Background
Source: RMDB library M2RFPK, as collected in RNAgym. This 207-nucleotide RNA was probed chemically with 2A3. For 2A3 the reverse transcriptase was SuperScript II with manganese. Values cover nucleotides 27 to 156. The RNA was probed in 150 mM KOAc, 10 mM MgCl2 and 150 mM bicine (pH 8.5) at 24 C.
[RMDB]
RNA sequence: GGGAACGACUCGAGUAGAGUCGAAAAAGAGCCGGAUACGUCCGGCUCAACGGGGGAUACGUGUGGUGCCGUCCGCUCCCCCUAUGGCAUAACAAAUUCACCACACACUAGGCUACGGCCUAGUGAAAAAAGGUGUAUGUGUUCGCACAUACACCAACGACUACACAUACUUCGGUAUGUGUAGUCGAAAAGAAACAACAACAACAAC
Reactivity to 2A3 in 0.01 (KOAc 150mM, MgCl2 10mM, bicine 150mM(pH8.5), 24C), signal-to-noise 2, nucleotides 027 to 156: a000g000a000g000c000c000g030g010a020u010a040c130g140u000c000c000g000g030c000u010c000a000a000c020g030g000g000g000g000a030u070a130c060g090u070g010u000g110g010u030g120c100c040g070u050c040c060g010c090u040c000c000c000c000c030u040a080u190g120g010c040a160u110a130a040c080a070a040a020u140u070c010a000c030c000a000c000a000c000a000c010u000a010g000g020c000u010a020c260g030g000c000c000u000a000g010u000g000a060a010a000a000a000a030g010g000u000g000u000a000u000g030u000g020u030u040c240g030c100a000c000a000u000a000c000a000c000c000a000a020